Chemical mapping of a 207-nucleotide RNA with 2A3.
2A3 adducts were read by reverse transcription with SuperScript II with manganese.
The RNA was probed in 150 mM KOAc, 10 mM MgCl2 and 150 mM bicine (pH 8.5) at 24 C.
Reactivities are rounded to 0.1 and cut off at 0 and 3.
RNA sequence: GGGAACGACUCGAGUAGAGUCGAAAAGGGGUCAUACUCGACCCAUUUGUCAGGCUCGGGUACUGAAGCCUCCACGGUAUCUCUAGCGUGGCCUUGGAUUUAAUGGGAAGAGUAUGACGGAGGCACCCAAAUCAGGGAUAGUUCGCUAUCCCUGAAACUGAAAGAGGUUGUUCGCAACCUCUUUCAGAAAAGAAACAACAACAACAAC
Reactivity to 2A3 in 0.01 (KOAc 150mM, MgCl2 10mM, bicine 150mM(pH8.5), 24C), signal-to-noise 1, nucleotides 027 to 156: g070g010g030g000u010c000a000u000a020c000u040c020g030a030c000c050c000a010u150u120u090g010u000c000a000g140g000c020u020c070g000g000g040u000a000c020u000g040a130a040g030c000c000u040c000c000a020c000g000g000u010a030u100c140u000c000u210a050g060c190g170u100g050g050c020c060u190u180g100g000a150u230u200u300a090a050u110g000g000g030a030a030g020a010g000u000a000u000g050a020c010g000g000a000g020g000c030a070c000c000c020a020a130a080u050c000a000g010g010g000a000u000a010g110u050u070c250g030c140u010a000u030c000c000c000u010g000a000a000a010